[RMDB]
RNA sequence: GGGAACGACUCGAGUAGAGUCGAAAAAAAAGAUAUGGAUCCUACUACCCACCCAUGCUACGCGAAGAACUUUAUUCGGAAACGAAUAAAGGGAGCGUAGGCAUGGAGGUAGGAUCCUAAGUCAAAAGGAUAUUACUUCCUUCGGGAAGUAAUAUCCAAAAGAAACAACAACAACAAC
Reactivity to DMS in 0.01 (KOAc 150mM, MgCl2 10mM, bicine 150mM(pH8.5), 24C), signal-to-noise 1, nucleotides 027 to 126: a030a030a060a140g000a030u000a060u010g000g000a000u000c010c010u000a020c000u000a080c020c040c120a300c050c000c000a000u000g020c000u000a000c010g050c010g000a140a240g010a060a200c020u000u000u000a000u000u000c020g010g030a010a000a070c000g000a010a010u000a000a000a000g000g000g000a000g010c000g030u000a000g040g010c020a000u010g020g000a000g020g010u000a000g030g000a000u000c000c000u000a000a090g000u030c020a070a070a200a120